RNA sequence: GGGAACGACUCGAGUAGAGUCGAAAAGGAGCCAUAAGUAGAGAAGAGCGCGUUCUGGCAAUAGACCGUACGGAAACCAUCCAAUAACAUACGUACGGAAACCAUCCUGGUAUUGUGAUGCAUGCGAAAGGAUGGGAUGGCAUGCGAAAGGAUGGAGAACAGGAACCAGGUUCGCCUGGUUCCUGUUAAAAGAAACAACAACAACAAC
Reactivity to 2A3 in 0.01 (KOAc 150mM, MgCl2 10mM, bicine 150mM(pH8.5), 24C), signal-to-noise 2, nucleotides 027 to 156: g050g000a040g020c030c020a070u090a160a050g100u110a010g020a020g010a130a010g020a010g020c080g020c010g020u040u030c030u060g050g020c010a020a020u080a110g080a030c000c000g000u010a000c010g050g030a060a030a070c020c000a020u060c000c010a080a120u180a200a030c060a110u190a080c020g000u010a000c010g010g000a060a010a000c000c000a000u000c000c000u030g080g000u160a120u130u140g010u080g060a040u140g010c020a000u000g000c010g000a130a000a000g010g010a000u010g010g000g030a010u100g060g010c010a020u030g020c000g010a080a040a020g000g000a000u010g000g010a030g050
Reactivity to DMS in 0.01 (KOAc 150mM, MgCl2 10mM, bicine 150mM(pH8.5), 24C), signal-to-noise 1, nucleotides 027 to 156: g020g010a010g030c000c070a120u000a110a060g050u020a070g020a170g000a140a120g000a060g000c060g030c040g000u010u000c010u000g000g020c080a060a060u000a100g010a120c020c000g000u000a040c000g010g010a090a090a080c000c000a030u000c020c220a130a170u030a030a080c050a020u000a110c000g020u000a000c010g000g010a060a160a150c030c040a040u010c010c000u000g030g030u000a110u010u000g000u000g030a150u050g010c030a030u000g000c010g000a060a070a140g000g010a110u000g000g020g000a060u000g010g060c000a000u010g040c010g000a160a080a050g000g000a020u000g010g000a150g000
The data come from the RNA Mapping Database (RMDB), library OK3TST. The record gives the reactivity of an RNA of 207 nucleotides to 2A3 and DMS. The 2A3 profile rests on 1,477 reads. For DMS the reverse transcriptase was MarathonRT. Reactivities are rounded to 0.1 and cut off at 0 and 3. Values cover nucleotides 27 to 156.